[RMDB]
RNA sequence: GGGAACGACUCGAGUAGAGUCGAAAAGAGCGAUUAGACAAAGGGGUAGAGCUACAUAUUAGAUAGCUGUAUAAUCGUUCAAGUGACAUCAAAACAUCUUCAAUAUUUAUUACUUACUUUCCUUUCUGCCAGAGUACGGUAUUCGUACCGUACUCAAUAUUAGUCAAGCUUUCGAGCUUGACUAAUAAAAAGAAACAACAACAACAAC
Reactivity to 2A3 in 0.01 (KOAc 150mM, MgCl2 10mM, bicine 150mM(pH8.5), 24C), signal-to-noise 5, nucleotides 027 to 156: g010a000g000c010g010a010u010u030a030g040a080c060a050a130a030g080g030g010g010u070a050g010a010g060c010u020a010c030a080u280a200u190u120a100g170a280u020a010g000c000u000g030u040a020u010a020a010u010c010g010u010u020c020a040a040g040u020g040a050c020a070u140c060a110a120a040a030c010a110u090c110u270u110c070a100a090u060a170u210u180u150a140u130u080a060c010u060u010a030c010u040u050u090c010c010u030u090u060c020u020g060c040c030a040g000a000g000u000a000c000g000g000u000a020u010u070c110g030u010a000c000c000g000u000a010c000u000c000a000a000
Reactivity to DMS in 0.01 (KOAc 150mM, MgCl2 10mM, bicine 150mM(pH8.5), 24C), signal-to-noise 2, nucleotides 027 to 156: g010a030g000c040g030a090u020u000a000g000a100c050a050a060a060g000g020g040g030u000a090g010a060g000c030u000a040c030a110u000a200u000u030a190g010a180u000a040g040c010u000g010u000a040u000a020a020u020c020g010u000u000c010a130a060g020u010g010a080c040a080u000c070a050a090a090a130c030a170u000c080u010u010c040a030a120u000a120u000u000u000a080u040u000a070c040u000u000a090c080u000u000u000c020c030u000u000u000c040u000g000c070c030a150g000a030g000u000a010c020g020g030u000a030u000u000c300g000u000a000c000c000g020u000a000c000u000c000a000a080
This 207-nucleotide RNA was probed chemically with 2A3 and DMS.
The data come from the RNA Mapping Database (RMDB), library M2RFPK.
As a SHAPE reagent, 2A3 marks flexible, mostly unpaired nucleotides at the ribose 2'-OH.
For DMS the reverse transcriptase was MarathonRT.
Conditions: 150 mM KOAc, 10 mM MgCl2 and 150 mM bicine (pH 8.5), 24 C.
Reactivities are given for positions 27 through 156.